This 170-nucleotide RNA was probed chemically with DMS and 2A3. The reactions ran in a buffer of 150 mM KOAc, 10 mM MgCl2 and 150 mM bicine (pH 8.5), at 24 C. The data come from the RNA Mapping Database (RMDB), library 15KLIB.

RNA sequence: GGGAACGACUCGAGUAGAGUCGAAAACUCCCCGCUCCUGGAGAAGGGAGACUCGGGAACGCCUAGCAUCUGAGGGACGAAGCCGCCCCCGGGCGCUCCCCUCGGAGAUCCACUGGGUGGGUUCACAUCAUCAACGGGUUCGCCCGUUGAAAAAGAAACAACAACAACAAC
Reactivity to DMS in 0.01 (KOAc 150mM, MgCl2 10mM, bicine 150mM(pH8.5), 24C), signal-to-noise 6, nucleotides 027 to 129: c050u020c000c000c000c000g020c040u020c000c000u060g050g050a080g020a110a120g000g000g000a050g010a050c070u020c120g000g000g000a130a060c020g000c030c010u010a030g030c120a110u030c020u020g020a050g000g030g030a110c010g030a040a220g030c040c030g010c020c000c020c040c110g020g010g020c000g040c030u000c000c000c010c000u030c060g030g010a040g000a030u040c060c090a190c080u030g010g010g030u030g000g040g100u000u020c000a100c100a100u030c130a090
Reactivity to 2A3 in 0.01 (KOAc 150mM, MgCl2 10mM, bicine 150mM(pH8.5), 24C), signal-to-noise 8, nucleotides 027 to 129: c020u040c020c000c000c000g030c000u020c010c010u090g100g090a200g040a140a100g050g030g000a010g020a010c050u050c100g010g020g020a040a000c030g010c010c010u030a020g020c020a120u020c020u030g020a020g010g030g010a020c060g080a080a010g040c080c020g050c020c020c000c000c010g030g010g000c020g000c010u020c000c000c000c010u000c000g000g000a010g000a060u070c050c010a040c040u020g000g020g000u040g010g070g000u050u050c100a100c020a150u170c010a020